[RMDB]
RNA sequence: GGGAACGACUCGAGUAGAGUCGAAAAACAAAGAGAUCGAAAGAGCAAUGUGAAACUCAUCAUCCUAGCGAAUGGUUGGGCUCGAAAGAUCGAGUGUUACCAUCACAUCCCGGACGCUAGAAAAAAACUGUAACAGGUAGUUCGCUACCUGUUACAGAAAAGAAACAACAACAACAAC
Reactivity to 2A3 in 0.01 (KOAc 150mM, MgCl2 10mM, bicine 150mM(pH8.5), 24C), signal-to-noise 2, nucleotides 027 to 126: a000c060a010a120a010g140a020g000a040u130c090g010a030a130a110g020a000g010c100a050a080u160g060u030g070a070a050a040c050u060c030a020u000c000a020u020c050c010u010a010g040c010g070a060a000u010g070g080u000u050g030g080g000c020u000c010g060a130a140a070g190a150u030c010g000a000g000u120g230u080u030a020c040c000a020u080c030a020c000a070u030c010c000c000g000g030a010c040g020c020u000a000g000a080a020a020a020a000a020a030
Reactivity to DMS in 0.01 (KOAc 150mM, MgCl2 10mM, bicine 150mM(pH8.5), 24C), signal-to-noise 2, nucleotides 027 to 126: a040c090a030a070a150g020a110g000a040u000c040g000a020a120a060g000a010g000c040a040a030u000g000u010g000a110a080a060c030u010c060a060u000c110a080u010c060c010u000a030g050c000g020a160a030u000g000g000u030u000g010g010g000c010u000c000g020a030a150a110g000a070u010c010g000a040g010u000g000u000u010a040c010c000a030u000c140a080c100a110u000c020c030c000g000g010a210c010g010c020u000a030g020a000a020a060a030a010a040a120

Structure probing data (2A3 and DMS) for a 177-nucleotide construct. It was measured as part of the RMDB library M2PK90. For DMS, 958 sequencing reads were counted. For DMS the reverse transcriptase was MarathonRT. The RNA was probed in 150 mM KOAc, 10 mM MgCl2 and 150 mM bicine (pH 8.5) at 24 C. Reactivities are rounded to 0.1 and cut off at 0 and 3. 2A3 adducts were read by reverse transcription with SuperScript II with manganese. Reactivities are given for positions 27 through 126.